Structure probing data (DMS and 2A3) for a 177-nucleotide construct. In probing experiments dimethyl sulfate is read out at A N1 and C N3, which are open when not base-paired.
RNA sequence: GGGAACGACUCGAGUAGAGUCGAAAACCGCGGGCUGGAACGCCCCCGCGCACCAGGAAUGUCUUGUAGGCGCCCGCCCCCACCGCGCGCCGGACGCGUCCCUGCCCCUUGUACACACCGCCCGUCGAGGAAUAAAUGUAUUCGUACAUUUAUUCCUAAAAGAAACAACAACAACAAC
Reactivity to DMS in 0.01 (KOAc 150mM, MgCl2 10mM, bicine 150mM(pH8.5), 24C), signal-to-noise 8, nucleotides 027 to 126: c050c020g010c120g000g010g030c030u000g010g010a100a100c120g010c010c030c010c020c060g000c020g020c050a100c080c040a070g010g010a120a080u020g020u010c050u000u010g010u020a120g010g010c040g010c030c020c040g010c030c010c010c020c020a080c120c050g010c120g010c050g020c030c070g000g010a060c100g010c030g000u000c020c010c020u000g000c010c010c010c040u010u020g010u010a050c080a070c060a080c050c030g000c010c000c010g020u020c090g000
Reactivity to 2A3 in 0.01 (KOAc 150mM, MgCl2 10mM, bicine 150mM(pH8.5), 24C), signal-to-noise 9, nucleotides 027 to 126: c010c000g010c050g010g010g000c010u090g010g030a090a030c040g020c000c000c010c000c010g000c010g010c010a040c020c010a030g030g110a130a100u150g060u090c040u070u140g070u160a070g020g010c010g010c010c000c010g020c010c000c000c000c000a020c010c020g010c000g000c000g000c010c020g010g010a020c030g010c020g030u020c010c000c010u010g000c000c000c010c000u020u070g050u070a030c030a000c010a010c030c010g010c000c000c010g050u080c050g050
Source: RMDB libraries RFM100 and RFMREP, as collected in RNAgym.
The RNA was probed in 150 mM KOAc, 10 mM MgCl2 and 150 mM bicine (pH 8.5) at 24 C.